[RMDB]
Chemical mapping of a 207-nucleotide RNA with DMS and 2A3. For 2A3 the reverse transcriptase was SuperScript II with manganese. 2A3 is a SHAPE reagent: it acylates the 2'-hydroxyl of flexible nucleotides of all four kinds. The 2A3 profile rests on 9,597 reads. It was measured as part of the RMDB library OK3TST. DMS adducts were read by reverse transcription with MarathonRT. Conditions: 150 mM KOAc, 10 mM MgCl2 and 150 mM bicine (pH 8.5), 24 C.

RNA sequence: GGGAACGACUCGAGUAGAGUCGAAAAGGAACAUGGGUAGAUGCUAGCGUACAAUGUAAAAUUACAUUAUUCAUUGCUAUCACCGUUGCAGGAUUGACAUCUCGCACAAGCCGAACCAAUUGGUCUAGCACAAUAUUUUUUUCCAUCAUAGGCAACAGACACUAUUAACAUUCGUGUUAAUAGUGUCAAAAGAAACAACAACAACAAC
Reactivity to DMS in 0.01 (KOAc 150mM, MgCl2 10mM, bicine 150mM(pH8.5), 24C), signal-to-noise 4, nucleotides 027 to 156: g030g000a050a060c080a070u000g020g020g040u000a140g020a070u000g010c070u010a070g030c050g040u000a060c070a030a030u010g030u010a030a080a100a170u000u000a060c050a080u000u000a100u000u000c040a130u000u000g010c010u000a090u000c030a040c030c020g010u010u000g030c040a080g010g010a110u010u000g040a070c050a160u000c030u000c030g050c020a100c060a060a160g010c030c010g000a060a130c070c030a110a130u010u000g030g010u000c030u000a060g030c030a090c070a010a070u010a000u000u000u000u000u010u010u000c050c010a100u000c060a100u000a060g030g010c040a050a080c100a170
Reactivity to 2A3 in 0.01 (KOAc 150mM, MgCl2 10mM, bicine 150mM(pH8.5), 24C), signal-to-noise 9, nucleotides 027 to 156: g060g010a080a040c040a100u100g020g000g040u070a070g030a090u060g020c030u030a020g010c020g040u070a020c050a040a030u040g040u140a060a100a130a140u290u100a050c040a050u070u100a090u110u160c050a040u040u100g000c030u040a030u130c020a020c040c030g030u030u050g010c040a030g010g040a030u020u020g020a060c030a070u020c040u030c080g020c020a030c020a110a010g040c040c010g030a040a020c030c000a050a080u060u150g030g010u040c020u020a020g020c020a010c030a090a030u070a160u070u080u020u020u010u030u020c030c010a040u060c040a040u140a090g080g020c040a070a020c030a080